[RMDB]
Background
An RNA of 177 nucleotides, treated with 2A3 and DMS and read out base by base. For DMS the reverse transcriptase was MarathonRT. For DMS, 1,212 sequencing reads were counted. For 2A3 the reverse transcriptase was SuperScript II with manganese.
RNA sequence: GGGAACGACUCGAGUAGAGUCGAAAAGAUAUGGAUCCGAGAACGCAGCCAGGAAACUCGGAAACGAGCUACUCCUGGAACUACUGCGACGGAUCCUAAGUCAAAGGUGGUUGUUCGCAACCACCAAGGUUAUCUCAGUGUUCGCACUGAGAUAACCAAAAGAAACAACAACAACAAC
Reactivity to 2A3 in 0.01 (KOAc 150mM, MgCl2 10mM, bicine 150mM(pH8.5), 24C), signal-to-noise 1, nucleotides 027 to 126: g030a020u080a010u120g000g000a000u000c020c000g060a080g110a300a000c010g000c000a020g000c000c000a000g000g030a030a080a050c010u000c010g010g000a000a050a060c010g000a010g000c050u160a100c030u070c000c000u020g000g000a000a000c010u170a010c020u000g000c020g050a030c000g030g000a000u050c000c000u010a100a020g080u040c040a100a060a070g030g000u010g010g070u010u040g030u030u050c300g030c150a020a020c000c000a000c000c000a000a000
Reactivity to DMS in 0.01 (KOAc 150mM, MgCl2 10mM, bicine 150mM(pH8.5), 24C), signal-to-noise 2, nucleotides 027 to 126: g000a020u000a300u010g000g000a030u020c000c020g040a140g030a210a190c030g000c010a000g000c000c000a000g050g010a060a050a130c020u000c000g010g000a080a020a190c010g000a020g030c030u020a150c140u000c010c000u000g000g010a070a000c020u000a300c040u000g000c000g000a130c020g010g010a010u030c000c000u000a010a080g000u000c030a100a130a100g000g010u000g000g010u000u010g000u000u000c190g040c000a010a000c000c000a020c000c000a000a010